Overview:
Structure probing data (2A3 and DMS) for a 177-nucleotide construct. Reactivities are given for positions 27 through 126. For 2A3 the reverse transcriptase was SuperScript II with manganese.

RNA sequence: GGGAACGACUCGAGUAGAGUCGAAAAGAUGGGUAGAUAGUGUGGUUGGAGACACGGAUUUCUUCCUGAACAAAGUCCCUCCCCUACAUGGUGGACAUGGGAUGAGACGGCCUUCAGUUACUUCCUCCAGUACACGCCUAUUCGUAGGCGUGUACUGAAAAGAAACAACAACAACAAC
Reactivity to 2A3 in 0.01 (KOAc 150mM, MgCl2 10mM, bicine 150mM(pH8.5), 24C), signal-to-noise 2, nucleotides 027 to 126: g090a040u140g010g000g040u060a050g050a120u080a050g060u060g040u020g070g120u110u130g060g040a050g000a020c050a010c050g050g090a070u080u020u020c010u060u030c020c000u020g040a060a040c060a060a120a040g070u000c000c010c020u020c000c010c010c000u090a160c050a170u200g140g000u190g070g000a020c000a170u100g000g020g000a020u060g030a040g020a030c050g020g050c010c000u020u050c010a030g020u010u080a050c000u040u000c030c000u070c000
Reactivity to DMS in 0.01 (KOAc 150mM, MgCl2 10mM, bicine 150mM(pH8.5), 24C), signal-to-noise 4, nucleotides 027 to 126: g000a070u000g020g000g020u010a040g020a050u010a090g000u010g000u010g010g010u000u010g020g010a130g010a070c070a070c100g000g000a120u010u000u010c070u020u000c030c000u000g000a090a110c130a070a110a210g010u000c020c000c000u000c020c010c010c030u020a090c190a070u010g000g020u000g000g020a060c160a060u010g010g000g000a080u000g010a080g010a100c060g010g000c090c060u000u010c060a050g010u000u010a070c130u000u000c020c020u000c180